[RMDB]
Description:
Source: RMDB library TTRINS, as collected in RNAgym. Structure probing data (DMS) for a 177-nucleotide construct. Reactivities are given for positions 27 through 126.
RNA sequence: GGGAACGACUCGAGUAGAGUCGAAAAGAUAUGGAAUAGCGAGGAUCUGACGAUGCCUUGGACCUAAUCGGAGCUCGGAAACGAGCUCCGAUUAGCUAGGCAAUGUCAGGGAGCUAUUCCUAAGUCACUAGCUCUAACUGUUCGCAGUUAGAGCUAGAAAAGAAACAACAACAACAAC
Reactivity to DMS in 0.01 (KOAc 150mM, MgCl2 10mM, bicine 150mM(pH8.5), 24C), signal-to-noise 1, nucleotides 027 to 126: g000a060u000a300u000g010g000a030a000u000a010g010c020g020a080g010g000a030u010c000u000g000a020c010g020a160u000g030c000c000u000u010g040g000a180c300c010u010a010a000u000c000g050g000a020g040c000u010c010g000g000a090a080a240c010g020a030g000c010u000c010c000g010a000u000u000a010g000c030u020a000g000g000c020a030a140u020g010u000c010a000g010g000g000a020g020c000u000a020u000u000c000c000u000a010a100g010u000c010a300